[RMDB]
RNA sequence: GGGAACGACUCGAGUAGAGUCGAAAAUUUCUUAUUAUCAUUGCAGAUGCUAUUUUUUCAGUGAUAUUCAGUUUACGAGGUAUUUGAUGACCGCCAUCGAACCUAGCGAGCCUCUCAUUGAAAUUCACGAUUAAAAUGAGUUCGCUCAUUUUAAUCGAAAAGAAACAACAACAACAAC
Reactivity to 2A3 in 0.01 (KOAc 150mM, MgCl2 10mM, bicine 150mM(pH8.5), 24C), signal-to-noise 2, nucleotides 027 to 126: u010u040u010c020u030u190a130u080u050a060u110c010a010u040u110g010c050a010g050a190u030g050c050u110a250u180u150u020u010u040u050c000a000g000u000g000a020u000a040u130u070c030a010g040u030u060u060a080c080g000a010g070g040u130a220u100u090u110g040a020u040g090a080c040c080g010c100c000a000u000c020g000a020a020c020c030u010a030g070c030g030a010g000c040c000u000c000u000c050a040u040u130g080a070a050a060u100u130c090a040
Reactivity to DMS in 0.01 (KOAc 150mM, MgCl2 10mM, bicine 150mM(pH8.5), 24C), signal-to-noise 3, nucleotides 027 to 126: u000u000u010c010u010u010a080u010u010a030u000c020a050u000u000g000c190a090g010a050u000g000c120u010a000u000u000u010u010u000u000c030a020g020u000g000a020u000a040u000u010c240a090g010u010u010u000a080c090g010a030g020g020u000a070u000u000u000g010a070u010g000a150c130c140g010c200c030a030u000c030g010a040a050c000c020u000a080g000c040g000a050g010c030c030u000c030u000c050a030u000u000g010a030a040a140u000u000c130a120

Structure probing data (2A3 and DMS) for a 177-nucleotide construct. For 2A3 the reverse transcriptase was SuperScript II with manganese. The reactions ran in a buffer of 150 mM KOAc, 10 mM MgCl2 and 150 mM bicine (pH 8.5), at 24 C. The DMS profile rests on 2,098 reads. It was measured as part of the RMDB library OK2TST. DMS adducts were read by reverse transcription with MarathonRT. For 2A3, 1,550 sequencing reads were counted.